The record gives the reactivity of an RNA of 177 nucleotides to 2A3 and DMS. It was measured as part of the RMDB library OK2TST. The 2A3 profile rests on 2,570 reads. In probing experiments dimethyl sulfate is read out at A N1 and C N3, which are open when not base-paired. Conditions: 150 mM KOAc, 10 mM MgCl2 and 150 mM bicine (pH 8.5), 24 C.
RNA sequence: GGGAACGACUCGAGUAGAGUCGAAAAUGAUUAUAUUCAUGCGGCCAAAAUUGAUAAUGCUAGUCUGUGGCAAAUUAUGAUUUACCUGAUGAUGCCGCUGAAUAAAGCAAUUAUCGCCAUUGUGGCAUAAUUUAAUGCCUUUCGAGGCAUUAAAUUAAAAAGAAACAACAACAACAAC
Reactivity to 2A3 in 0.01 (KOAc 150mM, MgCl2 10mM, bicine 150mM(pH8.5), 24C), signal-to-noise 3, nucleotides 027 to 126: u070g020a030u020u150a100u100a050u250u020c010a030u200g010c010g030g020c040c020a060a070a020a010u060u040g070a020u030a090a030u040g000c030u010a050g100u180c090u110g180u110g060g000c000a060a120a000u110u040a040u090g080a040u060u060u140a100c040c040u060g050a060u050g030a030u140g040c000c000g000c020u020g010a010a000u040a040a050a000g000c020a000a100u110u040a080u180c040g000c010c000a060u060u170g060u100g040g000c000a010
Reactivity to DMS in 0.01 (KOAc 150mM, MgCl2 10mM, bicine 150mM(pH8.5), 24C), signal-to-noise 5, nucleotides 027 to 126: u000g000a070u000u010a140u000a050u010u000c010a020u010g040c040g020g010c010c150a070a050a080a060u010u000g010a030u010a050a050u000g010c030u000a100g020u000c090u010g020u000g010g020c010a030a100a070u000u000a040u010g000a120u000u000u010a090c140c100u010g030a100u000g010a190u000g010c000c020g020c000u000g000a030a020u000a010a060a100g020c080a040a050u010u000a050u000c110g020c050c030a200u010u010g020u000g000g020c020a120